[RMDB]
RNA sequence: GGGAACGACUCGAGUAGAGUCGAAAAGGGCUUGACGCAUCGCCCGAAUAAGAUGCAUGUGCUUUUGCACUAAGAUAAAUGUCCGUAUAGUAGGGGACGUAGAACCUACUCAUUAAUGUCCGAAGAGUCUGGGACGAUCAUCAGGCUAGACUAAGAAAAAUGCCUCAUCAUUCGUGAUGAGGCAUUUAAAAGAAACAACAACAACAAC
Reactivity to 2A3 in 0.01 (KOAc 150mM, MgCl2 10mM, bicine 150mM(pH8.5), 24C), signal-to-noise 1, nucleotides 027 to 156: g020g010g000c000u040u030g020a080c040g010c030a000u000c000g000c000c000c050g000a030a000u120a000a030g010a000u060g030c050a020u140g000u000g000c020u080u060u090u300g010c000a040c080u030a050a030g060a150u130a190a120a050u160g060u000c040c000g020u100a030u090a060g000u000a000g000g000g040g000a000c080g020u050a000g030a080a000c020c000u000a000c000u030c010a000u020u150a080a000u220g020u050c030c030g050a080a060g000a000g050u000c010u000g000g000g110a140c050g060a080u110c080a040u020c020a020g020g000c000u030a060g000a100c010u070a080a000g050a040a130
Reactivity to DMS in 0.01 (KOAc 150mM, MgCl2 10mM, bicine 150mM(pH8.5), 24C), signal-to-noise 2, nucleotides 027 to 156: g000g000g010c060u010u000g000a120c070g040c000a040u000c040g000c000c030c010g000a130a150u000a100a110g000a060u000g010c020a180u000g010u000g060c020u010u010u000u010g010c000a080c040u010a140a100g010a040u000a060a050a110u010g000u000c010c030g010u020a170u010a030g020u000a030g060g010g010g020a140c140g000u000a060g000a130a220c000c010u000a020c030u010c110a090u000u030a090a200u000g000u000c020c040g020a110a100g010a160g020u010c050u020g020g030g000a050c030g000a080u000c050a080u000c030a060g000g030c000u020a130g010a000c030u000a090a100g030a000a110